Structure probing data (2A3 and DMS) for a 177-nucleotide construct.
The data come from the RNA Mapping Database (RMDB), library OK2TST.
The RNA was probed in 150 mM KOAc, 10 mM MgCl2 and 150 mM bicine (pH 8.5) at 24 C.
Values cover nucleotides 27 to 126.
DMS adducts were read by reverse transcription with MarathonRT.
The 2A3 profile rests on 18,893 reads.
[RMDB]
RNA sequence: GGGAACGACUCGAGUAGAGUCGAAAAAUAUCAGCAGUAACGGCAUUUCCAUCCAGGCGGAUGUUUCGCGCAAGAAUGACAUGGAGCGUGUGGCGCGCACUGCUUUUGAAGAAUUCGGCCGUAUCGACACCUAUUAAUGGUUCGCCAUUAAUAGGUGAAAAGAAACAACAACAACAAC
Reactivity to 2A3 in 0.01 (KOAc 150mM, MgCl2 10mM, bicine 150mM(pH8.5), 24C), signal-to-noise 9, nucleotides 027 to 126: a000u140a030u080c030a010g070c010a020g040u070a060a020c010g030g000c020a030u070u050u000c030c020a050u020c030c020a050g090g010c040g030g030a070u060g100u040u180u100c050g000c010g000c020a040a070g120a190a140u150g030a040c060a120u130g080g030a120g060c060g010u050g030u050g100g040c020g000c010g010c060a020c020u030g000c000u080u040u050u100g080a070a050g040a040a060u070u060c050g040g020c020c010g020u040a070u080c010g020a010
Reactivity to DMS in 0.01 (KOAc 150mM, MgCl2 10mM, bicine 150mM(pH8.5), 24C), signal-to-noise 9, nucleotides 027 to 126: a090u010a050u010c080a070g010c060a070g010u010a140a070c060g010g010c030a090u010u000u000c050c020a060u010c040c170a100g010g010c060g010g000a060u000g010u000u000u000c040g020c030g020c040a090a110g010a070a070u000g000a090c110a080u000g000g010a100g010c090g020u000g020u000g010g020c040g010c050g000c100a050c020u000g010c020u000u000u000u000g010a100a090g010a060a090u000u000c100g010g010c010c020g010u000a070u000c060g010a230